[RMDB]
RNA sequence: GGGAACGACUCGAGUAGAGUCGAAAAGCGUACUACGUAGCCGACGAUCAUGCCUGAACGAUAAGGGAGAUCCCAAAUAGGAUCUCCCUUUUGACGUUCACGCAUGGGAGGCUACGUAUCGCAAACUUUUGGAACAUGUUCGCAUGUUCCAAAAGAAUCCAUUCACUAUCUUCGGAUAGUGAAUGGAAAAAGAAACAACAACAACAAC
Reactivity to 2A3 in 0.01 (KOAc 150mM, MgCl2 10mM, bicine 150mM(pH8.5), 24C), signal-to-noise 2, nucleotides 027 to 156: g010c010g040u040a050c050u000a000c010g000u000a000g010c010c000g090a300c020g000a030u010c000a000u010g010c000c030u010g000a000a000c020g030a050u020a040a000g000g000g000a000g000a010u050c020c010c060a170a210a080u270a060g000g000a000u000c000u000c000c000c040u000u000u000u030g020a010c000g000u000u000c000a000c010g000c000a000u000g010g000g000a000g000g000c020u010a000c010g000u000a000u030c000g000c020a020a060a040c010u020u000u000u000g000g000a020a010c000a010u000g020u040u050c140g000c150a000u000g000u020u000c030c000a000a010a000a000g000a000a040
Reactivity to DMS in 0.01 (KOAc 150mM, MgCl2 10mM, bicine 150mM(pH8.5), 24C), signal-to-noise 2, nucleotides 027 to 156: g020c000g020u000a050c130u000a010c030g010u000a010g010c020c010g020a170c170g000a070u000c000a010u000g010c010c030u000g000a030a020c000g050a160u000a030a030g030g020g000a030g010a000u000c000c000c010a080a170a270u010a050g010g010a010u000c000u000c000c000c010u000u000u000u000g010a200c080g020u010u000c000a000c060g010c000a010u000g000g000g010a110g030g000c000u000a000c000g010u000a000u000c010g020c010a060a090a100c010u000u000u000u000g020g010a050a010c000a010u010g010u000u000c300g030c030a020u010g010u010u000c000c000a010a000a000a020g000a110a150
Chemical mapping of a 207-nucleotide RNA with 2A3 and DMS. For DMS, 6,420 sequencing reads were counted. For 2A3 the reverse transcriptase was SuperScript II with manganese. The data come from the RNA Mapping Database (RMDB), library RNAMAK. The reactions ran in a buffer of 150 mM KOAc, 10 mM MgCl2 and 150 mM bicine (pH 8.5), at 24 C.